Structure probing data (2A3 and DMS) for a 177-nucleotide construct.
DMS adducts were read by reverse transcription with MarathonRT.
Source: RMDB libraries RFM100 and RFMREP, as collected in RNAgym.
The RNA was probed in 150 mM KOAc, 10 mM MgCl2 and 150 mM bicine (pH 8.5) at 24 C.
Values are in units of 0.01, from 0 to 300, in steps of 10.
RNA sequence: GGGAACGACUCGAGUAGAGUCGAAAAGAGGUUUUCGGCGGAUGCCUCCCGGCUGGAGCGAUGACAGCCGCAAGUCCUCUCUUAAAACAAAGGGGUGACCCUUUGGACAAAGGGGAGGAUGUCAUCGCGAAACAGUAGGAUUCGUCCUACUGUUUCGAAAAGAAACAACAACAACAAC
Reactivity to 2A3 in 0.01 (KOAc 150mM, MgCl2 10mM, bicine 150mM(pH8.5), 24C), signal-to-noise 9, nucleotides 027 to 126: g050a010g030g030u100u100u100u210c100g090g030c100g120g030a030u070g020c000c000u020c020c010c000g000g000c000u010g000g030a300g050c000g000a000u010g000a000c000a000g000c000c020g050c140a000a010g000u000c010c000u000c000u000c010u050u090a050a080a030a030c010a000a000a000g010g020g010g050u120g090a150c000c000c000u000u000u000g010g000a030c080a020a160a030g000g000g000g000a000g000g000a000u000g000u000c000a000u000c000g000
Reactivity to DMS in 0.01 (KOAc 150mM, MgCl2 10mM, bicine 150mM(pH8.5), 24C), signal-to-noise 9, nucleotides 027 to 126: g010a040g010g010u000u010u010u010c030g020g020c180g000g000a100u010g000c010c000u000c010c190c000g000g000c010u000g000g000a100g020c000g000a010u000g000a010c000a010g010c000c000g010c180a020a020g010u000c000c000u000c000u000c010u000u000a090a140a110a110c000a000a000a010g000g000g000g010u050g000a220c000c000c000u000u000u000g000g010a060c160a050a120a130g000g000g000g000a010g000g000a000u000g010u000c000a000u000c010g020